[RMDB]
Source: RMDB library RFM100, as collected in RNAgym.
The record gives the reactivity of an RNA of 177 nucleotides to 2A3.

RNA sequence: GGGAACGACUCGAGUAGAGUCGAAAAACGUCCGUGAUACGUCACGGACGAAUUCGGGUGCAUUGUAGUUGCAUUGCACUUACCGUGUUGGCAACAGGUGCAGUACUUCUGCAAUGCAACCCGAAAAAUGGCUCUAGCAGUUCGCUGCUAGAGCCAUAAAAGAAACAACAACAACAAC
Reactivity to 2A3 in 0.01 (KOAc 150mM, MgCl2 10mM, bicine 150mM(pH8.5), 24C), signal-to-noise 2, nucleotides 027 to 126: a000c000g000u000c000c010g000u000g000a000u060a150c300g060u000c010a010c040g000g000a000c000g000a000a000u040u000c000g000g010g010u000g050c000a030u000u000g000u040a010g010u020u010g010c000a010u000u000g000c000a000c020u000u030a040c000c030g190u210g240u300u300g080g050c110a210a110c050a110g010g000u010g000c020a000g000u000a000c000u000u000c010u000g010c010a000a000u000g000c000a000a000c010c000c010g000a000a000a000a000

High 2A3 reactivity points to a flexible backbone, as in loops and unpaired stretches. The 2A3 profile rests on 932 reads. The reactions ran in a buffer of 150 mM KOAc, 10 mM MgCl2 and 150 mM bicine (pH 8.5), at 24 C.